Overview:
The data come from the RNA Mapping Database (RMDB), library OK3TST. An RNA of 207 nucleotides, treated with 2A3 and read out base by base. For 2A3, 562 sequencing reads were counted. Values cover nucleotides 27 to 156. The reactions ran in a buffer of 150 mM KOAc, 10 mM MgCl2 and 150 mM bicine (pH 8.5), at 24 C.

RNA sequence: GGGAACGACUCGAGUAGAGUCGAAAACUAUAGGCCCCAUUUACUUACAUUACUUGGCACGGUGUAUCCGCGUUCCAAUGCACCCUUCCCGGCUAUGGAGGCUGGAUCGGUCCCGGUACCUUCUAUGGUGCUCCUCCGACGUCCCCAGGCAGAAUGGCACUAGAGCGAGAUUCGUCUCGCUCUAGUGAAAAGAAACAACAACAACAAC
Reactivity to 2A3 in 0.01 (KOAc 150mM, MgCl2 10mM, bicine 150mM(pH8.5), 24C), signal-to-noise 1, nucleotides 027 to 156: c080u060a000u120a220g170g030c030c000c030c030a000u060u070u030a120c060u140u040a060c020a240u060u050a060c060u030u110g000g040c060a060c110g070g000u020g020u020a070u030c020c050g000c000g080u080u000c070c010a030a100u050g030c010a000c030c000c010u010u000c020c040c000g030g000c030u080a170u180g060g000a050g000g000c020u000g010g120a070u000c010g000g040u010c000c050c000g020g020u040a010c000c000u050u300c060u200a150u300g020g000u000g010c020u020c010c010u010c000c020g030a010c000g040u040c000c000c020c000a000g010g000c000a000g000a300a040u020g000g020